Structure probing data (DMS and 2A3) for a 177-nucleotide construct.
Values cover nucleotides 27 to 126.
High DMS reactivity at an A or C suggests that its Watson-Crick edge is free.

RNA sequence: GGGAACGACUCGAGUAGAGUCGAAAAGAUAUGGAGAUGGUGGCAACAGCGUACGGGUCGGAAACGACCCUACGACAUGCCACGUUUCCUAAGUCAAAAGGUUAGCGCUGUUCGCAGCGCUAACCAACUUUACUAACCGGUUCGCCGGUUAGUAAAGAAAAGAAACAACAACAACAAC
Reactivity to DMS in 0.01 (KOAc 150mM, MgCl2 10mM, bicine 150mM(pH8.5), 24C), signal-to-noise 3, nucleotides 027 to 126: g000a020u010a170u010g000g000a020g000a000u000g010g040u000g020g010c010a090a130c290a180g000c020g020u000a000c230g000g010g000u000c000g010g010a040a040a070c000g020a020c000c000c000u000a000c010g010a070c140a120u010g000c010c000a010c000g000u000u000u000c000c000u000a030a080g000u000c020a070a090a090a110g010g000u000u000a000g000c000g020c010u000g000u000u010c210g000c000a010g010c010g000c010u000a000a000c000c000a010a010
Reactivity to 2A3 in 0.01 (KOAc 150mM, MgCl2 10mM, bicine 150mM(pH8.5), 24C), signal-to-noise 3, nucleotides 027 to 126: g000a000u020a000u070g020g010a010g010a020u150g300g250u010g020g040c060a290a100c140a300g110c040g020u020a090c190g000g000g000u000c000g020g000a000a020a000c000g000a000c000c000c010u000a000c000g030a080c030a070u110g000c000c000a000c000g000u010u000u000c010c000u000a030a000g010u010c030a060a050a060a120g010g000u000u010a000g000c000g000c000u020g070u130u110c300g010c150a000g020c000g000c000u000a000a000c010c000a000a000